[RMDB]
Structure probing data (2A3 and DMS) for a 207-nucleotide construct. The 2A3 profile rests on 3,604 reads. 2A3 is a SHAPE reagent: it acylates the 2'-hydroxyl of flexible nucleotides of all four kinds. Conditions: 150 mM KOAc, 10 mM MgCl2 and 150 mM bicine (pH 8.5), 24 C. The DMS profile rests on 3,809 reads. For DMS the reverse transcriptase was MarathonRT. Source: RMDB library OK3TST, as collected in RNAgym.
RNA sequence: GGGAACGACUCGAGUAGAGUCGAAAAACUGUUCACAGUUAUGCUACUGUAACUGACUUUGGCACGCCGAUGUCAUCUAGUUAUGACAUGCGAGUCUCAUUACUAGAUGAGACUAAUGUGUAGUAGUACAGUAGCGUACUACACAUUGGAGAACAGACGUAGGAUGCAUGUUCGCAUGCAUCCUACGAAAAGAAACAACAACAACAAC
Reactivity to 2A3 in 0.01 (KOAc 150mM, MgCl2 10mM, bicine 150mM(pH8.5), 24C), signal-to-noise 6, nucleotides 027 to 156: a000c010u000g000u000u010c010a040c010a090g030u150u050a040u040g020c000u000a010c010u020g030u070a290a160c000u070g300a050c010u210u220u130g130g000c030a020c020g040c030c020g140a050u000g020u010c000a000u010c040u110a080g150u300u090a010u000g000a010c010a010u110g100c040g010a000g020u000c000u000c000a040u030u110a260c160u170a160g030a090u010g000a000g010a000c010u020a060a100u140g010u000g000u020a010g010u010a000g010u000a000c000a000g000u000a000g000c000g000u000a000c000u090a020c100a010c030a150u060u200g070g020a180g010a060a000c000a000g030a010
Reactivity to DMS in 0.01 (KOAc 150mM, MgCl2 10mM, bicine 150mM(pH8.5), 24C), signal-to-noise 2, nucleotides 027 to 156: a110c040u000g000u000u000c010a180c040a060g030u000u010a000u000g020c020u000a030c060u000g030u010a050a060c010u000g020a130c080u000u010u010g050g030c030a040c010g010c110c020g020a130u000g030u000c020a020u000c030u010a120g000u000u000a060u010g010a010c000a040u000g060c060g000a140g000u000c030u010c000a020u010u000a220c160u000a150g000a080u010g010a020g010a020c020u000a000a010u000g040u000g040u000a010g050u000a070g000u000a080c010a100g010u000a040g000c020g040u000a020c080u010a060c090a030c070a080u030u000g000g010a160g020a070a020c050a050g010a240